[RMDB]
RNA sequence: GGGAACGACUCGAGUAGAGUCGAAAAAUCGAGGUGGCCUCCUCCGUGAAGCUGUGCCGGCAAGCAGGCAUCCGGGUCAUCAUGAUCACUGGGGACAACAAGGGCACUGCUGUGGCCAUCUGUCGCCGCAUCGGCAUCUUCGGGCAGGAUGAGGACGACUCAUCCAGUAUUUCGAUACUGGAUGAGUAAAAGAAACAACAACAACAAC
Reactivity to DMS in 0.01 (KOAc 150mM, MgCl2 10mM, bicine 150mM(pH8.5), 24C), signal-to-noise 2, nucleotides 027 to 156: a110u000c040g010a130g020g010u010g000g030c000c000u000c030c040u010c010c050g000u010g060a050a070g010c190u010g030u000g030c040c050g030g000c130a090a110g000c030a180g000g030c050a120u000c020c040g030g030g000u000c020a050u010c140a160u010g030a090u000c030a060c090u000g010g030g010g010a230c050a110a100c050a080a180g000g000g010c060a050c030u000g000c040u020g030u000g020g000c000c030a070u000c060u010g030u000c060g010c000c020g040c040a080u010c050g000g050c000a080u000c030u000u010c050g000g010g030c040a070g030g040a090u000g020a080g020g010a090c040g010
Reactivity to 2A3 in 0.01 (KOAc 150mM, MgCl2 10mM, bicine 150mM(pH8.5), 24C), signal-to-noise 4, nucleotides 027 to 156: a010u110c080g020a020g030g070u110g090g000c010c010u010c010c020u030c020c050g090u100g060a040a010g010c160u120g000u030g050c000c000g000g010c080a080a020g020c020a080g020g030c010a020u030c010c010g020g000g070u030c010a080u070c020a060u210g020a030u070c050a030c230u110g010g020g010g050a020c030a100a010c040a130a100g030g080g020c070a040c130u070g050c040u050g050u040g050g030c030c010a060u060c070u090g060u080c080g000c040c010g000c030a080u070c010g010g000c000a010u040c030u040u040c010g040g050g070c090a060g030g000a010u030g020a030g020g040a020c030g020

Overview:
Conditions: 150 mM KOAc, 10 mM MgCl2 and 150 mM bicine (pH 8.5), 24 C. An RNA of 207 nucleotides, treated with DMS and 2A3 and read out base by base. For 2A3 the reverse transcriptase was SuperScript II with manganese. For 2A3, 2,232 sequencing reads were counted. For DMS the reverse transcriptase was MarathonRT.